[RMDB]
RNA sequence: GGGAACGACUCGAGUAGAGUCGAAAAGUUGCCACGCCCUGCCUGUACAGGUCGUGACAGGAGCAUAGAAGAUUCUAACGUAACGACUAUAAUAAUACUAUAUACAGUCUGGCUAAAUGUAGUAAUGCAUCCGAUACCCAUUCGUGGGUAUCGGAUGAAAAGAAACAACAACAACAAC
Reactivity to DMS in 0.01 (KOAc 150mM, MgCl2 10mM, bicine 150mM(pH8.5), 24C), signal-to-noise 2, nucleotides 027 to 126: g010u010u000g000c000c020a040c060g010c130c000c030u000g030c060c080u000g000u020a080c080a080g000g010u020c020g010u000g000a020c010a040g000g010a110g020c150a060u010a090g030a150a130g000a110u010u020c060u010a050a140c080g010u010a080a030c070g020a070c060u000a070u000a080a100u000a090a140u000a160c030u000a100u000a030u010a050c080a060g000u000c060u000g030g010c100u020a040a070a100u000g010u000a050g000u000a040a100u000g020
Reactivity to 2A3 in 0.01 (KOAc 150mM, MgCl2 10mM, bicine 150mM(pH8.5), 24C), signal-to-noise 1, nucleotides 027 to 126: g030u030u030g020c000c010a020c030g050c040c000c010u000g000c010c010u000g000u100a020c010a050g060g000u020c010g020u020g000a000c020a020g130g080a040g070c070a020u100a180g110a140a020g060a300u090u010c020u050a130a000c060g050u030a040a030c010g020a010c030u080a040u050a300a110u050a090a030u070a070c000u030a030u060a020u020a150c010a030g010u080c040u060g110g000c040u030a120a000a040u110g020u000a050g000u030a020a010u200g000
Source: RMDB library OK2TST, as collected in RNAgym. This 177-nucleotide RNA was probed chemically with DMS and 2A3. Values cover nucleotides 27 to 126. For 2A3 the reverse transcriptase was SuperScript II with manganese. DMS adducts were read by reverse transcription with MarathonRT.